[RMDB]
RNA sequence: GGGAACGACUCGAGUAGAGUCGAAAACAAACAAAGCAAAAUUGUCCAUUGCGGUCUACCGUCAGAAUUUCGGGCGGAUAUACGAAAUUAUACAGAAAGCCGGCCGCAAUGUCGUAUAGAAAGGAAAACCAGUCGUAAAUUUCGAUUUACGACUGGUAAAAGAAACAACAACAACAAC
Reactivity to DMS in 0.01 (KOAc 150mM, MgCl2 10mM, bicine 150mM(pH8.5), 24C), signal-to-noise 3, nucleotides 027 to 126: c080a040a130a100c110a090a110a150g020c180a080a060a060a060u020u050g000u010c110c020a010u030u000g030c000g000g010u000c000u030a130c080c120g040u000c040a070g020a100a090u040u010u010c020g010g020g020c050g000g000a100u020a050u020a060c020g010a040a060a060u000u010a080u040a130c110a210g000a080a120a050g040c140c200g020g010c010c000g000c000a000a000u000g000u020c160g020u030a060u000a030g000a050a060a030g000g000a080a040a120
Reactivity to 2A3 in 0.01 (KOAc 150mM, MgCl2 10mM, bicine 150mM(pH8.5), 24C), signal-to-noise 3, nucleotides 027 to 126: c020a030a050a000c040a050a140a020g170c090a110a110a060a120u200u080g040u000c030c000a000u010u010g000c000g000g000u030c010u040a050c000c000g000u010c000a040g050a230a050u090u120u100c040g000g000g030c020g080g020a040u070a030u000a090c010g000a000a010a000u150u040a040u070a080c100a040g160a080a020a010g140c060c040g000g010c010c000g000c030a000a000u000g000u000c000g010u040a050u030a070g150a010a130a040g130g060a000a050a000

An RNA of 177 nucleotides, treated with DMS and 2A3 and read out base by base. The 2A3 profile rests on 3,082 reads. DMS adducts were read by reverse transcription with MarathonRT. The RNA was probed in 150 mM KOAc, 10 mM MgCl2 and 150 mM bicine (pH 8.5) at 24 C.